[RMDB]
RNA sequence: GGGAACGACUCGAGUAGAGUCGAAAAGAUAUGGACCCAAAGGAGCGAUAAGAAACCAUCGGAAACGAUGGAAUUUCUUUUGACGCUCCUAUGGGUCCUAAGUCAAACAUGCACUUCGGUGCAUGAAGGGUAAACAAAACUUCGGUUUUGUUUACCCAAAAGAAACAACAACAACAAC
Reactivity to 2A3 in 0.01 (KOAc 150mM, MgCl2 10mM, bicine 150mM(pH8.5), 24C), signal-to-noise 1, nucleotides 027 to 126: g010a010u000a000u030g000g000a000c020c000c050a030a010a000g010g000a010g000c110g110a130u110a300a030g010a040a020a020c000c000a010u010c000g000g000a040a010a000c050g000a000u050g000g020a050a030u000u000u010c010u040u050u060u090g230a150c190g000c000u030c000c000u000a000u000g010g030g000u000c000c000u000a000a000g000u000c010a010a020a110c000a000u020g010c010a000c050u150u150c300g160g000u020g000c010a000u030g000a030a070
Reactivity to DMS in 0.01 (KOAc 150mM, MgCl2 10mM, bicine 150mM(pH8.5), 24C), signal-to-noise 1, nucleotides 027 to 126: g000a030u000a270u010g010g000a010c000c000c000a000a270a020g000g010a000g020c010g030a190u010a020a000g000a000a010a100c000c010a020u000c000g010g010a050a020a160c000g030a020u000g010g020a050a050u000u000u010c010u010u000u000u020g000a150c080g050c000u000c000c000u000a050u020g010g020g010u000c000c000u000a010a050g000u000c040a190a130a260c020a000u000g000c000a010c000u000u020c180g060g010u010g000c010a000u010g000a090a170